[RMDB]
RNA sequence: GGGAACGACUCGAGUAGAGUCGAAAACGGGGGCACUCUGAUUACAGAGUGACUUUGGGUGCUCCUGCUCUGAACACCAGGUCGGUUGGCAGCAGAGGUGUCAACUUGGGGGUUCUAUAUGAGCCCACGAUAAAUAGGCAUUCGUGCCUAUUUAUCGAAAAGAAACAACAACAACAAC
Reactivity to DMS in 0.01 (KOAc 150mM, MgCl2 10mM, bicine 150mM(pH8.5), 24C), signal-to-noise 5, nucleotides 027 to 126: c040g010g000g000g000g010c000a010c000u000c000u020g000a100u000u000a050c040a200g010a220g010u010g000a020c080u000u000u000g000g000g010u000g000c010u000c010c010u010g010c040u000c050u010g010a070a070c090a040c010c010a070g010g020u010c130g010g010u000u000g010g010c020a030g010c100a190g010a110g010g010u000g010u000c010a020a040c030u000u010g030g000g000g010g010u010u000c000u000a090u010a110u010g010a040g000c000c010c010a150
Reactivity to 2A3 in 0.01 (KOAc 150mM, MgCl2 10mM, bicine 150mM(pH8.5), 24C), signal-to-noise 5, nucleotides 027 to 126: c020g000g010g000g000g000c010a000c010u010c010u020g020a020u040u070a060c030a070g300a040g300u120g020a040c010u050u060u040g010g000g000u000g000c000u000c000c000u010g010c010u000c030u030g040a030a010c040a040c050c000a030g090g160u200c060g020g010u040u020g050g000c010a100g010c050a030g120a090g300g130u010g000u010c020a020a020c020u160u200g090g000g020g000g000u020u000c040u050a180u030a060u300g020a010g010c000c000c000a030